[RMDB]
RNA sequence: GGGAACGACUCGAGUAGAGUCGAAAAGAUAUGGAGUGUAUGGAGCUGUGCUCGGAAACGAGCAUACAGCUAUGAAGUACCUCCUAAGUCAAACAACUUUCUCUCACUUCGGUGAGAGAAAGUUGAACCACACUGUACCGUUCGCGGUACAGUGUGGAAAAGAAACAACAACAACAAC
Reactivity to 2A3 in 0.01 (KOAc 150mM, MgCl2 10mM, bicine 150mM(pH8.5), 24C), signal-to-noise 1, nucleotides 027 to 126: g000a000u020a010u060g000g010a030g010u300g020u110a000u020g020g010a000g000c000u000g000u010g020c000u000c000g010g040a000a000a000c000g000a000g000c000a000u220a020c020a010g000c010u050a300u040g000a000a000g020u010a000c000c010u010c000c000u000a030a000g010u000c050a080a030a160c000a010a010c000u030u010u010c000u000c000u010c000a000c010u000u160c300g120g020u000g000a000g010a020g020a000a000a000g010u000u000g000a000a010
Reactivity to DMS in 0.01 (KOAc 150mM, MgCl2 10mM, bicine 150mM(pH8.5), 24C), signal-to-noise 1, nucleotides 027 to 126: g000a000u000a070u010g000g000a000g000u020g010u010a010u000g000g010a040g060c000u000g010u000g000c000u000c000g010g000a020a000a060c000g000a010g000c000a110u010a040c070a000g010c010u000a220u000g000a100a210g000u000a010c000c010u000c000c000u000a000a050g000u000c000a140a080a190c010a000a010c000u000u000u000c000u000c000u000c000a000c000u000u000c200g040g010u000g010a010g010a010g000a000a000a000g010u000u000g010a090a260

About this RNA: An RNA of 177 nucleotides, treated with 2A3 and DMS and read out base by base. The RNA was probed in 150 mM KOAc, 10 mM MgCl2 and 150 mM bicine (pH 8.5) at 24 C. For DMS, 1,067 sequencing reads were counted.